[RMDB]
RNA sequence: GGGAACGACUCGAGUAGAGUCGAAAAGAUAUGGAGAUGGUAGCGUUGAAACCAUGGUGUCGGAAACGACAUUGGUGGAGCUACACAUCUCCUAAGUCAAACUGACUACACUUCGGUGUAGUCAGAAGUAACUAAUAUCCUUCGGGAUAUUAGUUACAAAAGAAACAACAACAACAAC
Reactivity to 2A3 in 0.01 (KOAc 150mM, MgCl2 10mM, bicine 150mM(pH8.5), 24C), signal-to-noise 6, nucleotides 027 to 126: g000a010u020a010u060g000g000a010g010a000u000g020g000u000a000g010c060g180u300u180g080a100a040a020c010c020a010u060g110g070u200g010u050c010g000g010a000a010a000c010g000a010c050a050u010u050g070g000u010g000g040a050g000c000u000a000c020a010c000a000u000c000u000c000c000u000a000a000g010u000c010a030a070a170c000u000g000a000c000u010a000c010a000c010u070u140c300g180g000u000g010u010a000g000u000c000a000g000a000a010
Reactivity to DMS in 0.01 (KOAc 150mM, MgCl2 10mM, bicine 150mM(pH8.5), 24C), signal-to-noise 2, nucleotides 027 to 126: g010a020u000a030u000g000g000a010g020a010u000g000g000u000a010g010c010g040u000u010g010a150a220a050c000c000a020u000g020g030u000g020u000c000g020g010a020a010a030c000g020a020c000a040u000u000g010g020u000g000g000a010g010c000u000a010c000a090c000a000u000c000u000c000c000u000a000a060g010u000c010a140a120a300c010u000g000a010c010u000a000c000a010c000u000u020c250g030g010u000g000u000a000g010u000c000a000g000a030a100